[RMDB]
RNA sequence: GGGAACGACUCGAGUAGAGUCGAAAACUCUGUUGUGAAGUCAAACAUGAGUAUGAAUUAACAUUAAUGGAUCUUUUUGAUUCAUAAUACUCAUGUUUGGUUUCACAGUAGAUAGAUAUCGACGUCUAUGUCGUGAACCGUUCGCGGUUCACGACAUAAAAGAAACAACAACAACAAC
Reactivity to 2A3 in 0.01 (KOAc 150mM, MgCl2 10mM, bicine 150mM(pH8.5), 24C), signal-to-noise 2, nucleotides 027 to 126: c080u000c000u000g000u050u000g000u000g010a020a000g000u000c000a000a000a000c000a000u000g000a000g010u000a030u010g130a100a050u130u290a130a060c080a040u080u200a120a130u070g000g000a010u000c040u030u270u020u180u300g000a000u000u000c010a000u020a030a050u000a000c000u000c000a040u020g000u000u000u050g000g000u000u000u000c000a000c000a000g000u000a000g000a000u040a020g020a010u130a030u090c090g060a070c050g000u000c030u090